Chemical mapping of a 177-nucleotide RNA with 2A3 and DMS.
2A3 adducts were read by reverse transcription with SuperScript II with manganese.
The data come from the RNA Mapping Database (RMDB), libraries RFM100 and RFMREP.
RNA sequence: GGGAACGACUCGAGUAGAGUCGAAAAAAACCACAGAUCUGUGUCCAGUAGUCCUGUUCCAGCUGCUGGUCGUCCUUCGUGAUGGCUAGUAGCUGUGUUUCGGUUGAUUCUGGACAGUUCGACGACCAGCUCUACACAACUUCGGUUGUGUAGAGCUAAAAGAAACAACAACAACAAC
Reactivity to 2A3 in 0.01 (KOAc 150mM, MgCl2 10mM, bicine 150mM(pH8.5), 24C), signal-to-noise 4, nucleotides 027 to 126: a000a010a000c070c010a070c020a010g040a060u000c010u040g130u010g070u080c020c000a030g020u110a010g010u120c000c020u020g000u000u000c000c000a000g010c000u000g000c000u000g010g000u000c000g000u000c020c010u230u200c150g210u300g080a000u010g010g010c010u010a000g020u020a010g000c020u000g010u000g000u010u010u010c010g000g020u090u180g030a050u060u010c000u000g000g010a000c010a000g000u010u010c020g030a070c040g040a100c090c020
Reactivity to DMS in 0.01 (KOAc 150mM, MgCl2 10mM, bicine 150mM(pH8.5), 24C), signal-to-noise 1, nucleotides 027 to 126: a050a080a070c000c020a050c270a240g000a000u000c030u090g030u010g000u000c000c000a000g000u050a050g010u010c060c000u010g000u000u000c000c010a000g000c000u000g040c000u000g000g010u000c000g010u000c000c000u060u080c280g000u030g010a010u000g000g000c000u010a000g040u030a010g020c000u010g010u000g050u020u000u000c020g010g000u020u120g000a060u000u010c000u000g000g000a030c000a060g010u020u030c020g000a120c050g000a190c200c090